This 177-nucleotide RNA was probed chemically with DMS. Source: RMDB library TTRINS, as collected in RNAgym. The reactions ran in a buffer of 150 mM KOAc, 10 mM MgCl2 and 150 mM bicine (pH 8.5), at 24 C.
RNA sequence: GGGAACGACUCGAGUAGAGUCGAAAAGAUAUGGAGACUGGCCUAUCUACCCACCGCUCCACUCGAGGCUCUCGGAAACGAGAGCUACCCACCGAGUUAAGCGAGGAUAGGCCAGUCUCCUAAGUCAGAGAGAAGUAAUGUUCGCAUUACUUCUCUCAAAAGAAACAACAACAACAAC
Reactivity to DMS in 0.01 (KOAc 150mM, MgCl2 10mM, bicine 150mM(pH8.5), 24C), signal-to-noise 3, nucleotides 027 to 126: g000a050u020a300u000g000g010a000g010a030c000u000g000g010c010c000u000a010u000c020u010a130c090c070c070a300c120c020g000c000u010c050c290a020c000u000c010g000a050g000g000c020u000c000u020c000g010g010a070a080a130c010g000a000g000a000g000c000u000a000c060c040c080a300c100c000g000a020g010u000u000a040a080g000c000g020a100g010g000a000u000a010g010g000c000c000a000g000u000c000u000c000c000u000a000a090g000u000c070a120